[RMDB]
RNA sequence: GGGAACGACUCGAGUAGAGUCGAAAAAGGGCUGGAUUCGUCCAGCCCUGCACAUUGGUACGCAACGAAGCGUACGUCAUUACGCAAAUGACGUAAAGCGUAGAACCACGGACUUCGGUCCGUGGAAAGGCUCGAGAUUAUUCGUAAUCUCGAGCCUAAAAGAAACAACAACAACAAC
Reactivity to 2A3 in 0.01 (KOAc 150mM, MgCl2 10mM, bicine 150mM(pH8.5), 24C), signal-to-noise 1, nucleotides 027 to 126: a010g040g000g000c010u000g020g000a000u030u020c090g070u030c000c000a000g000c000c000c010u000g000c020a020c020a100u050u110g150g010u080a020c000g000c050a130a060c170g180a120a010g190c010g050u020a000c010g000u000c020a020u040u050a060c080g040c170a090a030a140u010g030a020c010g040u050a050a020a070g010c000g010u000a020g040a100a020c010c000a000c000g000g000a000c000u020u030c220g080g000u000c000c000g000u010g020g020a010a000
Reactivity to DMS in 0.01 (KOAc 150mM, MgCl2 10mM, bicine 150mM(pH8.5), 24C), signal-to-noise 2, nucleotides 027 to 126: a000g000g000g020c000u000g030g000a030u000u000c190g020u000c010c000a000g000c000c000c000u000g000c050a070c160a130u000u010g000g020u000a020c000g010c040a090a110c140g010a080a120g000c100g010u000a010c000g000u000c000a050u000u000a070c290g010c150a120a060a020u000g000a000c000g000u010a030a050a180g010c030g010u000a040g010a130a230c000c000a000c000g010g000a020c000u000u000c190g000g000u000c000c000g010u000g000g000a010a030